An RNA of 177 nucleotides, treated with 2A3 and DMS and read out base by base.
Source: RMDB library M2PK90, as collected in RNAgym.
For 2A3 the reverse transcriptase was SuperScript II with manganese.
DMS adducts were read by reverse transcription with MarathonRT.
Conditions: 150 mM KOAc, 10 mM MgCl2 and 150 mM bicine (pH 8.5), 24 C.
The DMS profile rests on 3,218 reads.
RNA sequence: GGGAACGACUCGAGUAGAGUCGAAAAAUACAGCGUAAUCGAGCGGAGGAAAACGGGACUCCGAAAAUCCGGUACGAUUAUGAUCCCACUGCGUCGACGCUAGAUGCAGAACCGGAUUGCCGAGGAAAGACCAUAGUACUUUCGAGUACUAUGGUCUAAAAGAAACAACAACAACAAC
Reactivity to 2A3 in 0.01 (KOAc 150mM, MgCl2 10mM, bicine 150mM(pH8.5), 24C), signal-to-noise 3, nucleotides 027 to 126: a000u170a030c080a020g010c020g060u030a010a030u050c030g010a030g110c030g030g000a010g000g070a140a090a030a030c060g050g050g090a110c100u000c130c010g030a070a030a010a020u000c010c000g020g030u130a090c030g010a030u000u060a010u100g040a020u050c010c010c010a020c040u000g000c010g020u000c000g060a100c110g070c300u080a050g010a020u010g000c010a000g040a040a020c010c020g030g000a050u050u070g050c030c040g040a060g000g130a140a150
Reactivity to DMS in 0.01 (KOAc 150mM, MgCl2 10mM, bicine 150mM(pH8.5), 24C), signal-to-noise 4, nucleotides 027 to 126: a070u020a100c230a100g020c020g010u010a030a020u000c010g020a230g030c020g000g000a040g020g000a060a040a150a130c100g000g000g020a130c170u020c010c000g000a060a050a090a060u000c010c000g010g010u000a120c040g000a040u000u000a020u010g000a060u000c000c000c010a260c020u000g010c000g020u000c010g000a170c200g020c210u010a080g010a020u000g000c000a010g000a110a070c050c020g000g000a070u000u000g020c070c070g010a100g000g010a090a100